[RMDB]
RNA sequence: GGGAACGACUCGAGUAGAGUCGAAAAAAUGAUGUGGGUUGGGGAAUGGCUCUGUGACGUUACUGGUUUUGCUUCACCACUUACCGCAACCAUAAACAUGGUAUUGAAUACCAAACUGUUUGAAUGGCCCCGAAUCUACUUUCGAGUAGAUUCGGGGAAAAGAAACAACAACAACAAC
Reactivity to 2A3 in 0.01 (KOAc 150mM, MgCl2 10mM, bicine 150mM(pH8.5), 24C), signal-to-noise 1, nucleotides 027 to 126: a000a000u100g000a010u010g070u070g070g000g090u070u070g000g000g000g030a130a020u180g030g000c000u010c040u050g070u000g040a000c000g000u000u100a060c070u040g010g010u000u000u000u200g000c000u050u010c000a000c000c000a210c020u000u000a000c000c000g040c050a030a040c160c040a040u150a020a020a000c000a000u050g000g010u050a020u000u300g110a140a240u130a000c000c000a000a000a050c000u040g090u160u000u000g250a230a000u100g050g040
Source information:
The data come from the RNA Mapping Database (RMDB), library OK1LIB. The record gives the reactivity of an RNA of 177 nucleotides to 2A3. Conditions: 150 mM KOAc, 10 mM MgCl2 and 150 mM bicine (pH 8.5), 24 C.